[RMDB]
RNA sequence: GGGAACGACUCGAGUAGAGUCGAAAACGGAAGCAUAAAAACCAUUCGAGCUAGUCAAUGCGUGGCGUGUCUCUCCGCAGCGUGUUGGCGAAUGUAAAGAGUGACUAAGCAUGUAGUACCGAGGAUGAUAAGAGCAAUUCGUUCGCGAAUUGCUCAACGAUACGCGAGUGUUCGCACUCGCGUAUCGAAAAGAAACAACAACAACAAC
Reactivity to 2A3 in 0.01 (KOAc 150mM, MgCl2 10mM, bicine 150mM(pH8.5), 24C), signal-to-noise 1, nucleotides 027 to 156: c050g030g070a090a000g020c080a030u120a070a130a030a000a090c040c050a100u010u050c020g010a000g050c000u040a040g020u000c000a000a010u000g020c000g000u020g100g000c020g000u060g030u000c040u020c010u000c040c000g010c000a000g000c000g000u040g020u000u000g000g000c010g000a010a000u070g020u060a060a020a020g030a010g010u100g020a010c060u010a040a020g060c040a020u080g000u070a040g050u030a070c000c080g050a100g030g030a040u100g000a060u130a250a060g000a020g000c010a010a000u010u010c020g010u070u130c240g000c000g070a010a000u000u000g000c000u000c000a000a000